[RMDB]
RNA sequence: GGGAACGACUCGAGUAGAGUCGAAAACGCGCUUCGGCGCGGAAUACGGGGUCCGUCGUUGAUCGUUGUCCUUUGAUGACCAUACUGAAGCCUCCACGGUAUGCAAGAAGGCAACGGGAGACGGACGGAGGCACCCACAGCGGAUCUUCGGAUCCAACUCUUAAUUACAGUUCGCUGUAAUUAAGAGAAAAGAAACAACAACAACAAC
Reactivity to DMS in 0.01 (KOAc 150mM, MgCl2 10mM, bicine 150mM(pH8.5), 24C), signal-to-noise 1, nucleotides 027 to 156: c000g040c000g010c020u020u000c300g100g020c010g040c010g000g050a130a110u000a120c060g100g020g060g010u010c020c010g040u000c010g010u030u020g010a060u000c020g010u000u010g000u000c020c030u010u010u020g000a140u000g000a130c300c020a040u000a020c000u000g010a030a170g010c010c000u000c000c000a300c070g000g000u000a010u000g030c010a050a000g000a060a060g000g020c000a000a010c000g000g010g010a150g040a060c010g010g000a050c060g030g010a020g110g040c030a130c020c060c020a130c120a090g010c130g010g030a020u000c010u000u000c270g050g000a060u000c010c020a010a160
Reactivity to 2A3 in 0.01 (KOAc 150mM, MgCl2 10mM, bicine 150mM(pH8.5), 24C), signal-to-noise 4, nucleotides 027 to 156: c020g020c000g000c030u070u090c270g150g030c010g020c030g000g030a050a050u230a090c110g040g010g040g050u040c010c000g000u000c000g150u190u030g000a010u000c020g000u000u020g300u300c030c040u080u040u060g160a300u040g010a050c000c000a000u010a000c000u010g070a260a060g010c000c000u000c000c000a000c010g000g000u000a000u000g000c020a060a120g010a010a000g030g000c010a000a000c000g000g000g000a030g000a000c000g010g010a010c000g000g000a000g000g010c010a030c010c010c000a090c050a030g230c120g020g010a000u010c000u070u090c180g130g000a010u000c000c010a030a040
About this RNA
This 207-nucleotide RNA was probed chemically with DMS and 2A3. For DMS, 1,929 sequencing reads were counted.